[RMDB]
RNA sequence: GGGAACGACUCGAGUAGAGUCGAAAAGGAACGUUGUUCGCAACGUUCCGUGCCGGAAACGGACAUGACGAUCGCGCGCAUGUCGGGUAACCGUAAACGCGAGCAUCAUGGUGUUCGCACCAUGAAAAAUCAGCAAUGCGUUCGCGCAUUGCUGAUUAAAAGAAACAACAACAACAAC
Reactivity to 2A3 in 0.01 (KOAc 150mM, MgCl2 10mM, bicine 150mM(pH8.5), 24C), signal-to-noise 1, nucleotides 027 to 126: g020g000a020a000c030g010u000u000g020u020u100c260g000c060a020a000c000g000u000u000c000c000g000u020g060c040c030g060g020a160a190a010c010g050g000a000c000a010u030g140a140c010g080a060u050c030g000c010g050c010g000c010a000u040g020u020c000g040g010g030u120a070a060c030c040g020u020a090a150a040c030g000c030g050a050g040c020a070u020c000a000u010g010g000u010g050u020u040c160g110c040a010c000c000a000u000g040a050a020a000
Reactivity to DMS in 0.01 (KOAc 150mM, MgCl2 10mM, bicine 150mM(pH8.5), 24C), signal-to-noise 2, nucleotides 027 to 126: g000g000a000a000c000g010u000u000g000u000u030c170g050c020a000a000c000g020u000u000c000c000g020u010g030c020c020g000g000a110a140a050c000g020g010a100c040a010u000g010a120c030g010a030u000c060g000c020g020c040g000c050a030u000g010u010c020g000g030g020u000a080a190c240c020g000u000a020a110a040c040g020c000g000a060g010c300a160u000c000a000u000g010g000u000g020u010u010c120g030c020a010c010c010a000u010g000a000a040a110